[RMDB]
RNA sequence: GGGAACGACUCGAGUAGAGUCGAAAAGCGAACUUCCAUAGCAGAUUGAGGUGUCACGGUCUCUGUUAUUCAGAUUCGCAUCUCAGGUAGUAUUAGAUUGUGAUACCUCAAAUACUAUCUGAGGAAAGUAACUCUUAGUAUUCGUACUAGGAGUUACAAAAGAAACAACAACAACAAC
Reactivity to 2A3 in 0.01 (KOAc 150mM, MgCl2 10mM, bicine 150mM(pH8.5), 24C), signal-to-noise 9, nucleotides 027 to 126: g020c010g010a020a020c030u100u020c040c020a050u070a020g010c010a010g030a120u160u170g020a040g030g040u070g040u080c040a030c100g170g080u040c050u000c010u050g040u040u030a070u070u120c030a020g120a230u030u020c010g000c040a170u070c000u000c000a000g000g010u000a000g000u000a020u050u040a060g160a210u100u230g050u050g070a040u070a070c000c010u010c010a010a010a000u000a000c000u000a000u000c000u000g000a000g000g040a040a090a010
Reactivity to DMS in 0.01 (KOAc 150mM, MgCl2 10mM, bicine 150mM(pH8.5), 24C), signal-to-noise 9, nucleotides 027 to 126: g010c020g000a020a040c060u000u000c030c050a110u030a060g010c030a020g000a080u030u020g010a020g000g010u000g010u000c040a030c030g010g010u010c100u010c020u000g010u010u010a030u020u020c170a100g000a300u010u000c040g000c070a120u020c000u000c030a020g000g000u000a010g000u000a010u000u000a090g000a060u020u020g010u010g000a080u020a050c060c070u000c020a030a010a020u000a020c030u010a000u000c010u000g000a030g020g000a090a050a100

Source: RMDB library OK1LIB, as collected in RNAgym. The record gives the reactivity of an RNA of 177 nucleotides to 2A3 and DMS. For 2A3, 114,615 sequencing reads were counted. For DMS, 38,980 sequencing reads were counted. Conditions: 150 mM KOAc, 10 mM MgCl2 and 150 mM bicine (pH 8.5), 24 C. Reactivities are given for positions 27 through 126. 2A3 adducts were read by reverse transcription with SuperScript II with manganese.